RNA sequence: GGGAACGACUCGAGUAGAGUCGAAAAUCUGACGUUGCAUGGAGUCUAUGUCUGGACCUUCUCCAUUUCCUCUUUCAAGAGAAUGUGAGCAUUGAAGGAUUCGGACAUAGCCUUCAUGCAUGCUAGAAGGUAACAUAGCUUUCGAGCUAUGUUACCUAAAAGAAACAACAACAACAAC
Reactivity to 2A3 in 0.01 (KOAc 150mM, MgCl2 10mM, bicine 150mM(pH8.5), 24C), signal-to-noise 8, nucleotides 027 to 126: u040c030u040g060a030c070g100u020u020g000c000a000u010g010g000a010g000u000c010u000a000u000g000u000c000u010g010g010a000c000c000u010u010c010u000c010c000a010u050u060u110c070c030u030c020u070u300u130c180a200a030g010a000g010a020a010u040g110u150g040a060g080c170a210u090u280g030a010a010g030g070a240u000u010c000g000g010a000c000a000u000a000g000c000c000u000u000c000a000u000g000c010a000u000g010c000u030a090g020a140
Reactivity to DMS in 0.01 (KOAc 150mM, MgCl2 10mM, bicine 150mM(pH8.5), 24C), signal-to-noise 3, nucleotides 027 to 126: u030c010u000g000a080c100g020u000u000g010c000a000u000g000g000a000g000u000c000u010a000u000g000u000c000u010g000g000a020c010c000u000u000c010u000c020c020a040u000u000u010c120c010u000c010u000u050u040c300a060a040g020a010g000a030a000u000g010u040g000a100g020c300a120u060u020g000a030a010g000g000a210u010u000c010g000g030a000c010a020u000a000g000c050c000u000u010c020a000u000g000c010a000u000g010c040u010a030g010a240